[RMDB]
This 177-nucleotide RNA was probed chemically with 2A3. The reactions ran in a buffer of 150 mM KOAc, 10 mM MgCl2 and 150 mM bicine (pH 8.5), at 24 C. 2A3 adducts were read by reverse transcription with SuperScript II with manganese. Source: RMDB library OK1LIB, as collected in RNAgym.

RNA sequence: GGGAACGACUCGAGUAGAGUCGAAAAGACGUCAUCUUGUGGAAGGUUCCGUCACGCAGGAUGCCGGCGUUGCUCACCACACCAUGCACGGCGCCGAACUCGUCGAGCGCGGUCUUGAUGAUGUUCGAUCGCGUCAUCGGUUCGCCGAUGACGCGAUAAAAGAAACAACAACAACAAC
Reactivity to 2A3 in 0.01 (KOAc 150mM, MgCl2 10mM, bicine 150mM(pH8.5), 24C), signal-to-noise 1, nucleotides 027 to 126: g060a000c010g010u130c000a000u000c000u080u050g040u050g050g050a040a110g180g080u080u070c070c000g110u100c010a010c110g000c010a030g040g100a040u020g050c050c010g030g000c000g020u070u180g000c090u050c050a020c010c010a030c010a030c000c000a030u160g000c050a010c030g000g000c000g010c040c030g030a020a030c020u050c040g040u010c020g040a020g080c200g040c210g030g160u060c000u000u010g000a020u020g000a000u170g000u000u000c020g000